[RMDB]
RNA sequence: GGGAACGACUCGAGUAGAGUCGAAAACUUGACGCGCGGCUGCGCUUCGAGACGGGCAUGGUGUUGGCAACCGACCGGCGCAUCCUGGCCUGCGCGCCGGGCCGCCGCGAGUGGUCCAGCUGACCGACACUCACUAGGGUUUCGACCCUAGUGAGUGAAAAGAAACAACAACAACAAC
Reactivity to 2A3 in 0.01 (KOAc 150mM, MgCl2 10mM, bicine 150mM(pH8.5), 24C), signal-to-noise 1, nucleotides 027 to 126: c000u040u060g050a010c020g060c030g010c010g240g160c090u170g040c000g000c000u020u030c020g060a070g020a050c060g050g000g060c060a100u130g090g020u110g040u140u080g010g020c020a070a040c040c020g050a050c020c000g000g000c010g000c020a070u060c000c000u000g040g000c030c020u200g110c080g010c010g000c010c000g010g000g000c010c010g000c000c000g040c020g000a060g040u090g000g030u040c010c010a000g030c030u000g050a070c000c000g050a010
Reactivity to DMS in 0.01 (KOAc 150mM, MgCl2 10mM, bicine 150mM(pH8.5), 24C), signal-to-noise 3, nucleotides 027 to 126: c030u000u000g000a050c080g010c030g030c010g020g010c200u010g010c050g030c000u010u010c010g010a040g030a190c070g000g020g000c060a080u020g020g020u000g030u010u000g000g020c040a140a070c030c010g020a200c290c010g000g000c000g040c090a080u010c000c020u010g000g000c010c010u020g010c300g010c180g020c000c040g000g000g010c300c030g020c030c020g010c070g010a130g020u000g010g000u010c010c050a090g000c060u000g000a060c030c010g010a210